[RMDB]
RNA sequence: GGGAACGACUCGAGUAGAGUCGAAAAACGAUAACGAGGCGCUCGCUAUUGCUGCGUAACUGACGGCCUGACGGUCUGACGUUACAAAGCUAAAGUGCGGUUGGACCCCACCGGGCAACAGAAGGGGAAAGGCGACCCCGUUUCGACGGGGUCGCAAGCUACAUAUAAGCUUCGGCUUAUAUGUAGCAAAAGAAACAACAACAACAAC
Reactivity to 2A3 in 0.01 (KOAc 150mM, MgCl2 10mM, bicine 150mM(pH8.5), 24C), signal-to-noise 1, nucleotides 027 to 156: a000c060g030a070u090a040a020c000g000a030g130g000c060g040c020u040c050g100c060u100a090u250u250g010c010u000g000c000g010u010a000a010c020u010g020a010c060g010g000c030c050u250g160a090c110g000g000u000c000u000g000a000c000g000u000u020a000c000a000a020a000g000c020u000a020a030a010g140u130g050c020g020g000u030u050g180g050a020c000c030c000c000a010c020c020g040g160g040c050a110a010c000a080g080a040a010g080g000g000g080a130a010a030g070g030c010g010a000c000c000c030c070g000u040u040u050c140g040a010c030g000g060g000g000u000c000g000c000a000a000